RNA sequence: GGGAACGACUCGAGUAGAGUCGAAAAUUCACACCCCAAUCAACACCUACUACAAGGGCAAGAUGCCUUAUGCCGUCUUAUCCAAAACACCCAUGCCGAUCUGGUGCUCAAUGCGAUUGCUGGGGCAAUCUUCACGUCAGUUCGCUGACGUGAAGAUAAAAGAAACAACAACAACAAC
Reactivity to DMS in 0.01 (KOAc 150mM, MgCl2 10mM, bicine 150mM(pH8.5), 24C), signal-to-noise 3, nucleotides 027 to 126: u000u010c050a130c120a300c040c010c020c060a070a080u020c080a090a090c060a060c040c040u000a080c130u010a060c150a060a090g010g010g000c040a070a050g010a070u000g030c070c070u000u000a040u020g000c090c010g030u000c030u000u020a050u000c030c040a080a070a050a040c130a130c000c020c040a090u000g010c040c010g000a040u000c080u010g010g000u010g000c070u010c070a040a070u000g000c110g010a070u000u000g010c030u000g000g000g000g030c120a050
Reactivity to 2A3 in 0.01 (KOAc 150mM, MgCl2 10mM, bicine 150mM(pH8.5), 24C), signal-to-noise 3, nucleotides 027 to 126: u100u030c030a050c010a010c080c000c010c010a000a090u070c010a010a060c000a020c040c050u090a060c010u030a040c090a080a100g030g020g000c020a030a030g070a150u090g030c000c030u160u070a090u190g050c020c010g000u000c020u040u040a050u080c020c010a040a000a040a060c040a030c030c000c000a050u120g030c030c000g030a070u050c040u090g020g050u100g010c000u040c030a080a100u100g050c020g100a080u000u130g000c010u020g000g000g000g000c010a020
The record gives the reactivity of an RNA of 177 nucleotides to DMS and 2A3. Values cover nucleotides 27 to 126. The RNA was probed in 150 mM KOAc, 10 mM MgCl2 and 150 mM bicine (pH 8.5) at 24 C. 2A3 adducts were read by reverse transcription with SuperScript II with manganese.